[RMDB]
RNA sequence: GGGAACGACUCGAGUAGAGUCGAAAAGAUAUGGAAGCCUGAGAGGGCGAUAAGCUGCCAUCGGAAACGAUGGUCAGCUUUUGACGCCUGGUAGGCUUCCUAAGUCAAAGAUUGGUUCGCCAAUCAAGUAGAAAGAUUCGUUCGCGAAUCUUUCUACAAAAGAAACAACAACAACAAC
Reactivity to DMS in 0.01 (KOAc 150mM, MgCl2 10mM, bicine 150mM(pH8.5), 24C), signal-to-noise 2, nucleotides 027 to 126: g010a050u000a300u010g000g000a040a010g030c000c000u010g020a150g040a210g010g000g000c010g010a090u010a010a010g000c000u020g010c010c000a000u000c000g000g000a150a030a170c000g010a020u000g010g000u010c010a010g010c040u020u030u010u000g000a170c050g020c000c000u000g010g040u010a020g010g040c000u000u000c000c000u000a010a060g000u000c040a100a110a130g000a010u000u000g000g000u000u010c300g020c000c010a000a020u000c020a070a130
The data come from the RNA Mapping Database (RMDB), library TTRDES. An RNA of 177 nucleotides, treated with DMS and read out base by base. The DMS profile rests on 1,911 reads.